RNA sequence: GGGAACGACUCGAGUAGAGUCGAAAAGAUAUGGAGUCAUGGACAUGAGCUAGUACCAUCGGAAACGAUGGGACCGCUCAACAGCCCGCUGACUCCUAAGUCAAAGCCUUAACUUCGGUUAAGGCAAUCAAGAGAAAGGGUUCGCCCUUUCUCUUGAAAAAGAAACAACAACAACAAC
Reactivity to DMS in 0.01 (KOAc 150mM, MgCl2 10mM, bicine 150mM(pH8.5), 24C), signal-to-noise 7, nucleotides 027 to 126: g000a030u000a300u000g000g010a020g020u000c010a020u010g010g000a020c030a300u000g010a010g010c010u010a050g000u010a140c000c000a010u000c000g010g000a110a090a200c010g000a010u000g000g000g000a060c290c160g000c010u010c000a020a050c210a120g020c000c000c010g040c180u000g000a010c000u000c000c000u010a010a040g010u000c030a080a140a160g000c000c000u000u000a000a000c000u000u000c220g020g010u000u000a000a000g000g000c000a010a010
Reactivity to 2A3 in 0.01 (KOAc 150mM, MgCl2 10mM, bicine 150mM(pH8.5), 24C), signal-to-noise 3, nucleotides 027 to 126: g010a020u070a060u150g010g000a010g000u000c020a050u210g000g010a060c050a130u100g010a010g000c020u030a010g010u000a010c010c000a010u010c000g020g050a110a060a050c010g000a010u010g010g010g000a000c000c000g000c010u000c000a000a010c020a000g040c000c000c020g000c030u000g010a010c000u020c000c000u020a150a010g030u010c050a070a120a030g000c000c000u000u000a000a000c000u030u090c300g070g000u000u010a000a000g010g020c000a000a010
Structure probing data (DMS and 2A3) for a 177-nucleotide construct.
For 2A3 the reverse transcriptase was SuperScript II with manganese.
It was measured as part of the RMDB library TTRDEL.
The RNA was probed in 150 mM KOAc, 10 mM MgCl2 and 150 mM bicine (pH 8.5) at 24 C.
The 2A3 profile rests on 10,896 reads.